[RMDB]
RNA sequence: GGGAACGACUCGAGUAGAGUCGAAAAACAAAGCGAACGACACGAGUAGAGUCGAAAAGGGAACGACUCGAGUAGAGUCGAAAAGGGAACGACUCGAGUAGAGUCGAACGCAACCCAACCCAAAAAAGCUGUAAUAUUUCUUCGGAAAUAUUACAGCAAAAGAAACAACAACAACAAC
Reactivity to DMS in 0.01 (KOAc 150mM, MgCl2 10mM, bicine 150mM(pH8.5), 24C), signal-to-noise 1, nucleotides 027 to 126: a110c160a040a270a090g000c300g000a150a160c000g000a000c000a040c020g000a150g000u000a150g000a000g000u000c000g000a000a070a150a050g000g000g000a040a060c010g000a000c010u000c000g000a040g000u000a020g000a000g010u000c000g000a010a020a050a140g000g000g040a110a130c010g000a010c010u000c000g000a080g020u000a070g020a040g010u010c000g000a010a220c060g030c090a090a130c010c000c010a090a160c040c030c020a000a010a120a050a060a080
The record gives the reactivity of an RNA of 177 nucleotides to DMS. DMS adducts were read by reverse transcription with MarathonRT. The reactions ran in a buffer of 150 mM KOAc, 10 mM MgCl2 and 150 mM bicine (pH 8.5), at 24 C. Source: RMDB library M2PK90, as collected in RNAgym.